[RMDB]
RNA sequence: GGGAACGACUCGAGUAGAGUCGAAAACAUAUCAACUUCCGAGUUAACAAUUACUCUAAAACAUGAGGAUUGUACUCCUGUCUUUAUUGGAGAUUACUAUUCAGUCGUUGAUAAACUAGUAACCUCAGGGCGUAGUAAAGUUCGCUUUACUACGCCCAAAAGAAACAACAACAACAAC
Reactivity to DMS in 0.01 (KOAc 150mM, MgCl2 10mM, bicine 150mM(pH8.5), 24C), signal-to-noise 1, nucleotides 027 to 126: c160a140u000a000u000c020a040a000c000u000u000c130c050g000a000g100u020u000a250a010c000a000a020u000u000a300c000u000c000u000a000a050a160a100c300a050u000g160a000g000g020a090u000u000g030u000a260c050u000c000c000u000g010u000c030u090u000u020a110u060u000g000g000a110g000a160u000u000a100c060u000a000u000u000c000a100g000u000c000g000u000u000g000a070u000a000a060a110c190u060a100g000u010a060a020c000c000u000c060a070
Reactivity to 2A3 in 0.01 (KOAc 150mM, MgCl2 10mM, bicine 150mM(pH8.5), 24C), signal-to-noise 5, nucleotides 027 to 126: c020a010u080a000u020c010a010a010c010u060u000c030c030g010a020g030u050u090a060a020c020a040a050u060u170a300c010u020c020u090a160a220a070a020c080a040u180g000a010g000g010a010u020u020g000u010a060c000u020c000c020u040g100u090c080u120u290u300a230u170u180g000g000a020g010a010u060u100a080c070u050a030u020u040c020a000g000u010c020g010u000u000g020a020u030a060a060a000c080u070a040g050u040a060a060c010c050u070c060a070